[RMDB]
RNA sequence: GGGAACGACUCGAGUAGAGUCGAAAAUCCUAAGUCAAGGUGCGAAUACAGCUUGGAUUUAUGUGUCGAGCAUCGGAAACGAUGCGAUGAGACACAUUGUCAGCUGGGGUAGACCUUGAUAUGGAAAAACCACAGCGCCCUUCGGGGCGCUGUGGAAGAAUAUUGACUAGUUCGCUAGUCAAUAUUCAAAAGAAACAACAACAACAAC
Reactivity to DMS in 0.01 (KOAc 150mM, MgCl2 10mM, bicine 150mM(pH8.5), 24C), signal-to-noise 1, nucleotides 027 to 156: u000c000c000u010a090a240g000u000c010a020a020g000g040u000g000c060g000a210a160u000a090c020a040g000c030u000u000g040g020a020u000u000u010a020u000g020u000g040u020c000g060a200g020c010a010u010c000g010g010a140a060a290c020g040a020u000g000c000g030a140u000g010a300g000a040c000a010c010a000u010u000g000u000c000a070g010c010u000g010g030g020g000u000a150g010a060c000c000u000u020g000a020u000a130u000g010g000a060a050a090a140a160c010c000a000c000a010g000c000g000c020c020c000u000u000c300g120g050g020g060c000g140c000u000g000u000g000g010a000a000
Reactivity to 2A3 in 0.01 (KOAc 150mM, MgCl2 10mM, bicine 150mM(pH8.5), 24C), signal-to-noise 3, nucleotides 027 to 156: u000c000c000u010a110a020g010u000c000a000a010g090g010u220g300c020g040a110a020u040a040c000a000g020c040u130u190g150g000a070u190u300u090a030u050g030u000g000u010c020g030a010g040c000a000u000c000g010g000a050a100a080c020g000a000u010g010c030g060a150u140g140a070g010a010c000a000c000a000u000u020g010u000c010a000g000c000u000g010g000g010g000u010a010g010a030c000c000u000u000g000a000u000a030u020g000g040a030a070a030a040a000c000c000a000c000a010g070c010g040c030c010c000u060u150c280g030g000g000g000c000g030c000u000g000u000g000g000a010a000